[RMDB]
RNA sequence: GGGAACGACUCGAGUAGAGUCGAAAAGGGCAACGUUGAUGUCGAGGGAAGCCGCUGGCACGGCCGAUCUGCUGACGGCGGCCAAACGCGCGUUGGAGAACUACUACGAGGUGAGGGUCGACGACGACGGCGCCCUGACCUUUCUGCAUUCCGGUACGAGUAUACGUCUGUUCGCAGACGUAUACUCAAAAGAAACAACAACAACAAC
Reactivity to 2A3 in 0.01 (KOAc 150mM, MgCl2 10mM, bicine 150mM(pH8.5), 24C), signal-to-noise 1, nucleotides 027 to 156: g000g000g000c020a010a040c020g020u020u050g020a090u040g000u060c010g000a040g010g020g020a080a000g000c010c010g010c010u000g000g060c090a040c150g040g000c010c020g000a080u000c060u110g040c080u110g040a050c000g000g030c000g000g050c000c000a040a010a000c060g050c000g000c030g060u050u080g020g000a080g040a100a010c050u080a020c030u090a080c150g060a040g120g020u120g130a060g040g000g020u050c000g050a000c000g020a010c040g000a000c010g040g040c000g080c060c010c010u000g030a030c000c000u000u170u080c100u060g090c100a090u040u100c040c000g000g100u070a060c080
Chemical mapping of a 207-nucleotide RNA with 2A3.
The reactions ran in a buffer of 150 mM KOAc, 10 mM MgCl2 and 150 mM bicine (pH 8.5), at 24 C.
Values cover nucleotides 27 to 156.
For 2A3, 676 sequencing reads were counted.